This 177-nucleotide RNA was probed chemically with DMS. The reactions ran in a buffer of 150 mM KOAc, 10 mM MgCl2 and 150 mM bicine (pH 8.5), at 24 C. DMS adducts were read by reverse transcription with MarathonRT.
RNA sequence: GGGAACGACUCGAGUAGAGUCGAAAAAGUCUACUUUUCGAAGUAGACUGUGCUCCCACUUGUUCGAGGUCUCACCGUGUCAUUGCCCACGACACUCGGGCGUAAUAGAUUGGUUCGCCAAUCUAAAGGCGAUCAUAUUCUUCGGAAUAUGAUCGCCAAAAGAAACAACAACAACAAC
Reactivity to DMS in 0.01 (KOAc 150mM, MgCl2 10mM, bicine 150mM(pH8.5), 24C), signal-to-noise 1, nucleotides 027 to 126: a020g000u000c000u010a010c000u000u010u010u010c130g030a010a010g000u000a000g000a020c000u000g010u000g030c170u010c020c000c020a160c140u000u020g000u010u000c030g000a040g050g010u010c090u000c110a080c180c080g000u010g030u010c030a120u010u010g000c080c040c010a140c070g000a040c190a030c030u000c050g000g000g010c000g030u000a060a160u000a000g010a020u000u000g010g010u000u010c230g000c000c000a000a030u000c030u010a020a060a170